[RMDB]
RNA sequence: GGGAACGACUCGAGUAGAGUCGAAAAGCCGAAGCCUUCGAGCUGGUCACCAAGAAGCUGAACGAGGUCAAGGGAGUGGCCGACAAGACCCGCAUCAGCGCCGCCGUAUUCGGUGGGGCUGGUGAGGGAUGGCUCUGUUGUUCGCAACAGAGCCAUCAAAAGAAACAACAACAACAAC
Reactivity to DMS in 0.01 (KOAc 150mM, MgCl2 10mM, bicine 150mM(pH8.5), 24C), signal-to-noise 3, nucleotides 027 to 126: g010c000c020g010a070a110g000c060c030u010u000c080g020a180g000c030u000g010g020u000c040a080c100c070a120a120g000a110a090g000c120u020g000a080a120c120g010a090g020g010u010c040a020a110g000g010g000a100g010u000g020g000c010c020g010a080c150a080a140g010a140c020c010c000g000c000a010u000c000a020g000c000g010c000c010g010c000c000g000u010a240u000u020c020g020g010u000g020g000g010g010c000u000g010g010u000g000a070g010g000
Reactivity to 2A3 in 0.01 (KOAc 150mM, MgCl2 10mM, bicine 150mM(pH8.5), 24C), signal-to-noise 1, nucleotides 027 to 126: g010c020c000g050a020a000g080c000c020u000u080c010g050a060g000c020u010g030g020u040c040a030c060c030a010a150g060a080a000g050c100u080g080a090a060c070g040a100g000g060u030c050a080a110g060g090g000a050g090u070g050g000c000c030g010a040c070a040a020g040a080c000c010c020g000c010a010u020c000a000g020c020g100c040c010g000c010c010g010u170a300u260u300c020g010g040u010g020g010g040g000c000u010g040g000u000g010a050g000g010
Chemical mapping of a 177-nucleotide RNA with DMS and 2A3. The RNA was probed in 150 mM KOAc, 10 mM MgCl2 and 150 mM bicine (pH 8.5) at 24 C. Source: RMDB library OK2TST, as collected in RNAgym. The 2A3 profile rests on 1,229 reads. Reactivities are given for positions 27 through 126.